The record gives the reactivity of an RNA of 170 nucleotides to DMS and 2A3. DMS adducts were read by reverse transcription with MarathonRT. For 2A3 the reverse transcriptase was SuperScript II with manganese.

[RMDB]
RNA sequence: GGGAACGACUCGAGUAGAGUCGAAAAUUCAAACUGUGCGGCCUGGCAAUUUUAACCAAGACUUCUAUGAUUUCGUGGUAUCUAAAGGUUUCUUUAAGGAGGGCUCUUCAGUGACGCUCAAACAUUUAGACCAGAAUGUUCGCAUUCUGGAAAAGAAACAACAACAACAAC
Reactivity to DMS in 0.01 (KOAc 150mM, MgCl2 10mM, bicine 150mM(pH8.5), 24C), signal-to-noise 5, nucleotides 027 to 129: u030u020c020a030a020a030c110u030g010u030g030c020g020g020c010c040u030g000g060c080a040a030u050u030u020u020a050a080c060c050a080a060g000a060c060u000u000c040u060a080u040g010a000u010u000u000c050g070u010g040g000u000a100u030c080u060a050a070a110g000g080u000u010u060c030u010u020u010a010a000g030g020a090g020g030g000c010u030c020u000u000c110a070g020u030g000a060c150g050c000u030c040a080a020a090c110a070u010u030u020a080g010a170
Reactivity to 2A3 in 0.01 (KOAc 150mM, MgCl2 10mM, bicine 150mM(pH8.5), 24C), signal-to-noise 7, nucleotides 027 to 129: u080u020c010a050a040a040c030u040g020u030g030c010g010g020c000c000u020g020g030c010a050a060u040u030u080u140a040a030c030c020a060a030g020a060c040u080u000c060u110a100u220g040a130u070u060u070c070g030u060g040g000u050a040u020c040u110a070a040a080g030g000u020u010u010c010u000u070u040a040a020g050g030a020g040g000g000c010u010c000u060u040c040a110g060u030g100a030c060g010c020u070c040a100a130a060c030a060u080u090u170a060g020a040
The RNA was probed in 150 mM KOAc, 10 mM MgCl2 and 150 mM bicine (pH 8.5) at 24 C.